[RMDB]
RNA sequence: GGGAACGACUCGAGUAGAGUCGAAAACAAACAAAGCAGGUAUCGUGUACCGCGGCGCCACCACCAGCGUCCAGCAGAGCAUGCACAAAAUAGUCAGCGCGACGUUGAUCAUGCACAUCGGGACCAGGUACCGCGACGCGGGGAGGUACCUAGGAGAUACCCGGACUAAGUUCGCUUAGUCCGGGUAAAAAGAAACAACAACAACAAC
Reactivity to 2A3 in 0.01 (KOAc 150mM, MgCl2 10mM, bicine 150mM(pH8.5), 24C), signal-to-noise 1, nucleotides 027 to 156: c070a040a190a000c070a000a150a010g090c070a020g010g060u000a000u000c000g070u080g150u300a040c000c000g070c000g050g000c000g000c000c000a030c000c040a030c000c090a030g100c160g110u000c000c000a000g090c090a000g000a000g050c030a000u030g050c200a000c060a040a040a090a050u260a130g000u030c000a040g290c130g120c110g290a030c000g000u000u000g020a160u090c000a000u010g020c010a000c000a170u110c090g000g000g000a000c000c000a040g000g030u000a040c020c260g000c000g000a000c000g000c000g050g060g000g000a110g000g030u030a000c000c000u000a000g000g140a160g000a000